The record gives the reactivity of an RNA of 177 nucleotides to DMS and 2A3. The data come from the RNA Mapping Database (RMDB), libraries RFM100 and RFMREP. The reactions ran in a buffer of 150 mM KOAc, 10 mM MgCl2 and 150 mM bicine (pH 8.5), at 24 C. Reactivities are given for positions 27 through 126.

RNA sequence: GGGAACGACUCGAGUAGAGUCGAAAACGCAGUGAAAGCGAACGGAGGUGGGAGCCCGCAAGGGUGCACCAUCGACCGAUCCUGAAGUCUUCGGAUGGAUUUGAGUAAGAGCGUGGCUGUUGGGACCAACUUGAGCUACUUUCGAGUAGCUCAAGUUAAAAGAAACAACAACAACAAC
Reactivity to DMS in 0.01 (KOAc 150mM, MgCl2 10mM, bicine 150mM(pH8.5), 24C), signal-to-noise 3, nucleotides 027 to 126: c020g020c010a040g010u030g010a130a100a130g000c050g020a040a160c020g000g010a300g000g010u000g010g000g000a300g020c000c000c000g010c260a100a100g000g000g020u000g000c160a300c000c000a010u010c000g010a100c010c030g000a060u000c010c040u030g010a070a130g000u010c040u010u050c080g000g000a050u000g020g000a120u000u040u050g000a090g000u070a090a100g000a070g000c010g010u020g000g000c020u000g010u030u000g010g020g000a250c160c050
Reactivity to 2A3 in 0.01 (KOAc 150mM, MgCl2 10mM, bicine 150mM(pH8.5), 24C), signal-to-noise 2, nucleotides 027 to 126: c040g000c000a040g020u070g260a220a030a000g060c040g010a070a000c020g020g010a000g000g020u000g010g020g000a030g010c020c000c010g000c060a010a050g000g020g010u070g000c120a050c010c010a000u000c000g040a170c000c000g010a040u000c000c000u040g020a040a030g020u000c020u070u100c060g010g040a050u030g010g030a050u050u040u170g050a060g000u070a100a030g010a020g050c050g020u060g020g020c000u000g010u050u100g060g000g000a020c020c030